Chemical mapping of a 177-nucleotide RNA with DMS. The data come from the RNA Mapping Database (RMDB), library OK2TRN.
RNA sequence: GGGAACGACUCGAGUAGAGUCGAAAAAUGGAGGCGCCAACCGGAUUUGAACCGGUGAUAAAGGUUUUGCAGACCUCUGCCUUACCACUUGGCUAUGGCGCCGUACAAUGUUCAAUUUAAAAGCGGAUAUUUACCCUCCUUUCGAGGAGGGUAAAUAAAAAGAAACAACAACAACAAC
Reactivity to DMS in 0.01 (KOAc 150mM, MgCl2 10mM, bicine 150mM(pH8.5), 24C), signal-to-noise 2, nucleotides 027 to 126: a110u010g020g000a300g010g000c000g030c000c000a050a070c010c000g030g000a180u020u000u000g030a170a160c020c010g010g010u000g020a070u000a080a170a040g000g000u010u000u000u020g010c290a210g000a040c020c040u020c130u020g020c000c000u000u000a180c010c020a090c040u000u000g000g000c030u000a120u020g000g010c000g030c000c000g000u010a080c080a100a050u000g000u010u000c070a120a140u000u000u020a030a020a040a030g100c020g000g000a180